[RMDB]
RNA sequence: GGGAACGACUCGAGUAGAGUCGAAAACGCAUUUCAAAUGGGUCGAAUUGGGGCGUAGAGCGGGGACGGUCCACUGGAGAAUCGACCUCACCUGCGGCACAAGGACGUGCCUGGUUUUGAGUGAGGCAAGAUCUCCCUCGGCACUACGACAUGCCUGCCUUGAAUAAUACUUCGGUAUUAUUCAAGGAAAAGAAACAACAACAACAAC
Reactivity to 2A3 in 0.01 (KOAc 150mM, MgCl2 10mM, bicine 150mM(pH8.5), 24C), signal-to-noise 8, nucleotides 027 to 156: c050g030c040a040u020u080u130c080a130a130a100u120g020g000g030u030c030g060a100a130u090u080g010g000g010g020c020g010u030a050g000a020g100c060g010g010g000g020a020c050g040g130u030c010c060a060c100u070g020g000a040g030a090a180u060c030g110a290c010c000u010c000a010c000c010u040g010c030g000g000c000a000c020a110a170g300g070a060c140g020u010g030c000c010u070g130g070u070u070u240u110g170a200g010u010g000a000g000g020c010a030a060g000a010u010c010u020c010c010c000u010c000g070g000c020a020c050u070a020c050g040a030c020a030u060g040c010c010u050g020
Reactivity to DMS in 0.01 (KOAc 150mM, MgCl2 10mM, bicine 150mM(pH8.5), 24C), signal-to-noise 2, nucleotides 027 to 156: c080g000c080a110u000u000u000c050a020a120a030u000g010g040g040u000c080g000a100a200u010u000g020g010g020g000c050g030u000a100g010a130g020c170g090g020g020g010a080c070g050g040u000c030c030a200c100u010g060g000a070g010a050a100u000c000g010a040c010c000u000c000a010c020c020u000g000c090g010g000c000a020c020a150a220g020g000a160c240g030u000g020c000c020u010g050g000u010u000u020u010g000a050g000u000g060a040g010g000c030a070a070g020a190u000c000u000c020c000c010u000c030g010g010c040a090c010u010a070c060g000a100c040a090u000g000c010c000u000g000